[RMDB]
RNA sequence: GGGAACGACUCGAGUAGAGUCGAAAACGCUCAGGUUGGUGCUGGGUUAGGUAUUGGGACGGGUCUGGGUGCUCAGGCCGGUAUGGGCUUUGGCGGCGGGGUUGGCCUGGGUCUGGGUGGUCAGGCCUCUGUAGAUGACCUUCGGGUCAUCUACAGAAAAAGAAACAACAACAACAAC
Reactivity to 2A3 in 0.01 (KOAc 150mM, MgCl2 10mM, bicine 150mM(pH8.5), 24C), signal-to-noise 1, nucleotides 027 to 126: c000g010c010u000c000a020g130g000u110u130g020g010u060g010c060u000g010g000g040u050u080a090g000g040u150a220u070u130g070g000g030a070c050g030g030g000u090c060u050g020g010g190u060g000c000u000c010a040g000g000c060c000g000g060u140a200u170g050g000g040c000u070u070u110g070g000c020g000g000c030g000g020g000g000u090u210g050g000c000c000u030g010g020g030u000c040u000g050g020g000u030g050g030u060c000a000g010g000c020c030
Reactivity to DMS in 0.01 (KOAc 150mM, MgCl2 10mM, bicine 150mM(pH8.5), 24C), signal-to-noise 1, nucleotides 027 to 126: c160g040c020u010c020a050g000g010u010u000g040g010u020g010c000u000g000g010g030u010u030a030g000g000u010a080u000u020g010g010g000a210c080g000g000g000u030c010u010g000g030g010u050g000c000u010c040a000g000g020c040c000g000g050u000a030u030g010g010g030c020u010u010u000g000g010c070g000g050c010g010g000g000g030u000u000g000g000c010c000u000g010g010g030u000c030u000g000g000g030u000g010g000u010c000a010g020g000c010c000
This 177-nucleotide RNA was probed chemically with 2A3 and DMS. The RNA was probed in 150 mM KOAc, 10 mM MgCl2 and 150 mM bicine (pH 8.5) at 24 C. Values cover nucleotides 27 to 126. For 2A3, 978 sequencing reads were counted.